RNA sequence: GGGAACGACUCGAGUAGAGUCGAAAAUCCUCUGAUGUGCUGGGUGGGAGAAGGGUACAGUGAGGAGCACCUUUCCCAAGGGUUUUGGGACUUUCAGGGGACAGGCUGUUGUCCCCAAGGGCUGGCACCAUUAUGUAAUGUUCGCAUUACAUAAUGGAAAAGAAACAACAACAACAAC
Reactivity to 2A3 in 0.01 (KOAc 150mM, MgCl2 10mM, bicine 150mM(pH8.5), 24C), signal-to-noise 9, nucleotides 027 to 126: u020c020c010u030c060u080g190a120u080g030u030g030c020u040g010g060g110u220g050g030g030a170g060a150a060g060g010g010u060a050c030a050g090u040g100a030g020g010a010g020c040a100c010c000u020u060u020c000c000c010a010a010g080g000g010u060u090u150u070g020g000g010a020c010u100u150u050c190a080g000g000g010g000a000c010a010g130g040c090u140g060u300u030g000u040c000c000c000c000a000a000g010g010g000c030u030g020g000c020a030
Reactivity to DMS in 0.01 (KOAc 150mM, MgCl2 10mM, bicine 150mM(pH8.5), 24C), signal-to-noise 9, nucleotides 027 to 126: u000c010c010u000c100u000g020a110u000g010u010g010c040u000g000g010g020u010g000g000g010a100g010a080a080g010g000g010u000a040c070a060g010u010g010a070g010g000a090g020c090a090c020c040u000u000u000c000c000c010a080a080g000g010g010u000u000u000u010g010g000g010a130c250u000u010u000c140a160g010g000g010g010a020c010a020g010g020c160u000g010u000u000g010u000c010c000c000c010a010a020g000g000g010c070u000g010g010c150a200
This 177-nucleotide RNA was probed chemically with 2A3 and DMS. Source: RMDB library OK2TST, as collected in RNAgym. The DMS profile rests on 45,192 reads.